[RMDB]
RNA sequence: GGGAACGACUCGAGUAGAGUCGAAAAACCGAAGCGAAAGCUGUCGUCCAGUACGUUUCCGGUGAUCAAGGACGUAAGCCGGAGGAGCAAAGGUGAUUAGAGACCCCUGUAGUUCCGGCCGUAAACUUCAAAUCGUAUACUUCGGUAUACGAUUUGAAAAAGAAACAACAACAACAAC
Reactivity to DMS in 0.01 (KOAc 150mM, MgCl2 10mM, bicine 150mM(pH8.5), 24C), signal-to-noise 2, nucleotides 027 to 126: a150c100c020g000a050a010g020c000g010a120a090a150g010c040u000g000u020c070g010u020c100c010a080g010u000a100c090g010u010u020u000c030c020g010g020u000g000a080u000c100a090a110g020g020a030c070g000u000a070a210g000c010c010g010g000a100g020g020a120g010c000a040a040a040g000g000u020g010a110u040u010a160g010a210g010a150c100c060c010c050u000g020u000a200g020u000u000c000c010g000g000c020c020g000u000a000a070a060c120u030
Reactivity to 2A3 in 0.01 (KOAc 150mM, MgCl2 10mM, bicine 150mM(pH8.5), 24C), signal-to-noise 1, nucleotides 027 to 126: a000c010c010g000a060a000g000c040g010a150a050a040g020c010u000g060u090c030g030u000c030c010a010g010u070a040c020g010u000u030u050c040c050g080g040u090g000a120u150c030a120a050g080g050a000c030g030u040a000a090g000c000c000g000g000a010g030g050a080g070c030a050a030a040g010g000u100g020a100u030u250a100g050a040g090a210c000c010c020c000u020g050u090a030g000u070u000c000c000g050g040c030c000g090u080a000a100a100c010u010
Chemical mapping of a 177-nucleotide RNA with DMS and 2A3.
Values are in units of 0.01, from 0 to 300, in steps of 10.
Conditions: 150 mM KOAc, 10 mM MgCl2 and 150 mM bicine (pH 8.5), 24 C.
Reactivities are given for positions 27 through 126.
For 2A3, 1,113 sequencing reads were counted.
For 2A3 the reverse transcriptase was SuperScript II with manganese.